An RNA of 207 nucleotides, treated with 2A3 and read out base by base. As a SHAPE reagent, 2A3 marks flexible, mostly unpaired nucleotides at the ribose 2'-OH.
RNA sequence: GGGAACGACUCGAGUAGAGUCGAAAACAAAGAAGCAUCAAAUCGGGAACCAAAACAAACCGUUGGCAGCAGCAGCGUCGGUGGCAGAAGGAAGGCAGCGGACAGCAGCUUCCCAGCGCCAGCAGAGACGUUGACGUGACGGUGGCUGUGACGUCGACGAUCACGGGCCAUUCGUGGCCCGUGAUCGAAAAGAAACAACAACAACAAC
Reactivity to 2A3 in 0.01 (KOAc 150mM, MgCl2 10mM, bicine 150mM(pH8.5), 24C), signal-to-noise 1, nucleotides 027 to 156: c040a000a140a000g060a110a040g060c060a040u130c090a100a090a010u120c040g020g030g060a060a050c030c000a000a060a000a070c030a020a070a030c000c050g020u020u060g120g000c010a040g030c010a000g000c000a000g010c080g030u060c030g040g020u000g020g000c020a030g000a100a040g150g010a000a030g090g040c050a000g040c010g040g080a040c080a000g000c000a000g030c040u010u010c000c010c020a020g040c020g000c000c000a010g020c000a010g020a000g030a110c050g010u010u030g000a010c040g000u010g030a030c050g000g120u080g030g030c010u140g000u030g050a010c010g000u060c010g040a040